Notes:
Chemical mapping of a 177-nucleotide RNA with DMS. For DMS the reverse transcriptase was MarathonRT. The reactions ran in a buffer of 150 mM KOAc, 10 mM MgCl2 and 150 mM bicine (pH 8.5), at 24 C.
RNA sequence: GGGAACGACUCGAGUAGAGUCGAAAAGAUAUGGACCGUGACAAGCAUCGAUCUACUGUGUCGGAAACGACAUGUAGGGAGCUUGCUCACGGUCCUAAGUCAAAACCCUGGAGUUCGCUCCAGGGAACGUCUGUUACUGCUUCGGCAGUAACAGACGAAAAGAAACAACAACAACAAC
Reactivity to DMS in 0.01 (KOAc 150mM, MgCl2 10mM, bicine 150mM(pH8.5), 24C), signal-to-noise 1, nucleotides 027 to 126: g030a080u000a300u010g000g010a020c000c000g000u000g020a020c000a000a000g020c000a300u020c240g000a040u010c000u000a020c000u000g040u000g010u000c000g040g000a080a130a270c010g020a000c000a020u000g020u000a000g020g000g040a020g000c000u020u000g000c300u000c000a020c020g040g000u000c010c000u000a040a050g000u000c080a080a080a080a230c000c010c000u000g020g000a040g040u000u020c300g000c000u000c000c000a010g010g010g000a000a020